Source information: This 177-nucleotide RNA was probed chemically with 2A3 and DMS. For DMS, 2,108 sequencing reads were counted. The 2A3 profile rests on 408 reads. The RNA was probed in 150 mM KOAc, 10 mM MgCl2 and 150 mM bicine (pH 8.5) at 24 C. It was measured as part of the RMDB library OK1LIB. Values cover nucleotides 27 to 126. Values are in units of 0.01, from 0 to 300, in steps of 10.

RNA sequence: GGGAACGACUCGAGUAGAGUCGAAAAAUGAACAAUCACCAGCAUUUGGGCAGAAAAUUGGAUGAUAGUUUACCAGAUUUUGAAGACGUUGUGGUGAGGGGAUUCUGGAAAUGCUGAAAAAGUGGCGUCGAGUAUCAGUCUUCGGACUGAUACUCGAAAAAGAAACAACAACAACAAC
Reactivity to 2A3 in 0.01 (KOAc 150mM, MgCl2 10mM, bicine 150mM(pH8.5), 24C), signal-to-noise 1, nucleotides 027 to 126: a020u150g030a080a000c070a080a030u160c050a090c060c000a010g030c050a000u000u000u100g190g000g000c120a070g070a020a010a060a130u140u100g050g100a060u010g040a020u000a110g070u000u090u110a010c000c000a000g040a180u010u050u010u010g170a190a000g050a020c100g050u010u030g000u110g040g000u010g020a070g070g090g020g000a160u130u000c040u030g000g000a100a110a000u040g010c000u010g000a090a030a030a030a030g010u000g000g000c020g050
Reactivity to DMS in 0.01 (KOAc 150mM, MgCl2 10mM, bicine 150mM(pH8.5), 24C), signal-to-noise 2, nucleotides 027 to 126: a130u000g020a130a030c120a080a040u010c070a110c030c010a010g000c040a070u010u010u030g000g080g000c030a070g000a040a050a050a090u000u000g000g030a030u030g000a110u040a080g000u010u010u010a120c090c040a040g000a030u030u010u000u080g050a120a000g020a060c160g000u010u000g000u030g000g010u010g020a080g000g000g000g000a020u010u000c010u050g000g000a030a010a070u000g000c060u000g000a050a090a010a020a100g060u040g010g030c140g000